[RMDB]
RNA sequence: GGGAACGACUCGAGUAGAGUCGAAAAACCUUUCUGCCUGCCCAGAUACACUCAACCCAGGACGAAAUCAGCCUUGGACACCCUGCACUCUGCGCACGCACGCAACAAACAGAGAAGAGUCCAGUCCACAACAGUGACGGUUCGCCGUCACUGUUGUAAAAGAAACAACAACAACAAC
Reactivity to DMS in 0.01 (KOAc 150mM, MgCl2 10mM, bicine 150mM(pH8.5), 24C), signal-to-noise 1, nucleotides 027 to 126: a110c000c010u000u060u010c030u010g000c040c040u000g000c080c070c000a120g060a110u050a160c040a080c150u000c040a080a000c130c030c040a050g050g000a110c080g010a100a070a010u000c190a070g000c000c070u040u000g000g010a000c040a000c000c010c000u000g130c150a100c040u000c050u000g000c090g010c110a110c070g000c020a030c010g000c020a000a130c130a070a120a100c000a030g010a020g000a040a100g060a010g040u000c000c040a030g010u070c060c070
Reactivity to 2A3 in 0.01 (KOAc 150mM, MgCl2 10mM, bicine 150mM(pH8.5), 24C), signal-to-noise 2, nucleotides 027 to 126: a000c000c000u020u040u010c030u060g050c020c010u020g000c040c000c000a010g060a040u060a070c010a010c020u040c020a030a110c000c000c020a000g020g040a040c070g050a000a010a140u090c020a050g040c020c040u030u020g000g030a020c010a070c000c020c000u020g000c030a030c050u020c010u000g020c070g030c010a050c020g050c010a040c050g080c000a050a090c020a070a180a010c030a030g090a000g060a200a020g030a000g000u000c000c000a010g040u040c010c030
The data come from the RNA Mapping Database (RMDB), library RFM100.
An RNA of 177 nucleotides, treated with DMS and 2A3 and read out base by base.
For DMS, 1,151 sequencing reads were counted.
For 2A3 the reverse transcriptase was SuperScript II with manganese.
The reactions ran in a buffer of 150 mM KOAc, 10 mM MgCl2 and 150 mM bicine (pH 8.5), at 24 C.